RNA sequence: GGGAACGACUCGAGUAGAGUCGAAAACGUCGUGAACUAGCGACAAUGCAAUAGCUCCAUCGUUAUCUAACCGAAACAUCGUGACUAGUCGUAGAAUAGAACCAGGAGAGGACGCUGGCAAACAAAGACUGGGUGUCUGAUUCGUCGGACGCCCAGUAAAAGAAACAACAACAACAAC
Reactivity to DMS in 0.01 (KOAc 150mM, MgCl2 10mM, bicine 150mM(pH8.5), 24C), signal-to-noise 2, nucleotides 027 to 126: c130g060u020c050g010u000g000a120a110c180u030a110g020c030g000a030c080a300a300u000g000c300a000a030u100a260g000c030u000c010c080a230u000c120g000u000u000a240u000c010u010a060a040c050c020g000a030a040a050c140a020u030c050g020u000g000a050c030u010a020g000u010c060g010u000a000g020a040a040u020a050g000a080a110c040c040a110g000g000a040g000a030g000g000a000c060g000c030u000g000g000c040a050a030a040c070a020a050a060g000
Reactivity to 2A3 in 0.01 (KOAc 150mM, MgCl2 10mM, bicine 150mM(pH8.5), 24C), signal-to-noise 4, nucleotides 027 to 126: c050g020u020c020g020u050g110a170a120c060u040a110g010c010g020a020c050a050a040u290g000c020a000a000u030a110g000c000u000c020c000a080u070c080g000u070u060a100u000c060u080a050a080c030c050g070a070a060a040c030a060u120c070g060u020g050a060c050u050a060g050u030c070g040u060a040g030a100a070u090a050g040a040a010c020c010a030g000g040a100g030a010g020g010a000c010g000c010u000g000g000c010a020a030a030c010a020a060a000g040